[RMDB]
RNA sequence: GGGAACGACUCGAGUAGAGUCGAAAACGAACCUAAACACUGUACUUUCUGAAACAAAAGUAGUAGCCACCGAAUACGACCCAUGCACAAAUGUCGUAUGCUACGGUAGGACAAAAGCAGCAAUGCCUGUGACGUAAAUGUUCGCAUUUACGUCACAAAAAGAAACAACAACAACAAC
Reactivity to 2A3 in 0.01 (KOAc 150mM, MgCl2 10mM, bicine 150mM(pH8.5), 24C), signal-to-noise 2, nucleotides 027 to 126: c030g050a030a060c000c010u110a110a100a020c060a000c090u040g070u160a050c030u010u130u000c060u090g090a150a070a060c060a070a120a020a000g000u030a020g000u050a030g060c030c000a020c010c060g030a050a020u000a010c000g000a000c010c030c080a050u290g000c120a120c030a190a080a110u150g010u030c000g000u010a000u040g030c020u070a030c000g000g000u030a110g030g020a000c020a030a110a000a000g010c010a010g000c030a040a240u070g000c000c010
Reactivity to DMS in 0.01 (KOAc 150mM, MgCl2 10mM, bicine 150mM(pH8.5), 24C), signal-to-noise 2, nucleotides 027 to 126: c110g000a110a130c020c070u010a020a090a070c120a130c090u020g010u080a070c070u040u000u000c060u000g010a100a100a070c180a090a030a000a000g010u010a060g040u000a070g020c020c040a040c010c040g040a300a060u000a060c000g000a040c000c210c060a170u000g000c190a100c240a010a150a040u010g000u000c010g000u000a000u000g000c180u010a070c020g030g000u010a070g040g000a110c030a000a040a110a010g000c030a010g000c140a050a130u010g000c040c060